[RMDB]
RNA sequence: GGGAACGACUCGAGUAGAGUCGAAAAAAUUUUAGAACAGUCGUUCUAAAUAAUAAGAACACUUAUAGAUCACAGCUUGGAUGCGUUUUCUUUAAUGGUGCUGAUAUUUCUGACACCAUUCCUGAUGCCACUGCGGCGUUCGCGCCGCAGAAAAGAAACAACAACAACAAC
Reactivity to DMS in 0.01 (KOAc 150mM, MgCl2 10mM, bicine 150mM(pH8.5), 24C), signal-to-noise 1, nucleotides 027 to 129: a040a040u080u010u000u000a080g020a030a010c020a300g000u050c230g000u000u020c000u030a000a000a060u000a030a120u000a090a030g020a230a140c050a020c110u060u000a010u000a050g000a040u000c070a040c080a000g000c130u080u000g000g040a060u000g000c160g000u030u000u000u000c020u080u000u000a080a030u000g020g050u000g080c130u030g010a050u060a110u060u070u040c020u030g000a260c030a030c000c040a010u000u050c080c070u050g000a060u000g000c070c000a000
Reactivity to 2A3 in 0.01 (KOAc 150mM, MgCl2 10mM, bicine 150mM(pH8.5), 24C), signal-to-noise 1, nucleotides 027 to 129: a000a000u020u000u000u000a020g000a000a000c000a070g180u200c130g000u030u000c000u000a000a000a000u020a000a020u080a010a010g060a110a000c170a030c030u100u070a060u020a120g000a040u040c020a010c000a000g050c000u000u000g220g030a000u080g040c000g000u160u120u000u040c020u030u050u060a000a040u000g000g000u000g000c070u000g000a020u000a140u150u200u070c000u000g050a050c000a080c000c000a000u000u000c000c050u020g030a000u090g050c000c000a000

Chemical mapping of a 170-nucleotide RNA with DMS and 2A3.
Conditions: 150 mM KOAc, 10 mM MgCl2 and 150 mM bicine (pH 8.5), 24 C.
DMS adducts were read by reverse transcription with MarathonRT.
2A3 adducts were read by reverse transcription with SuperScript II with manganese.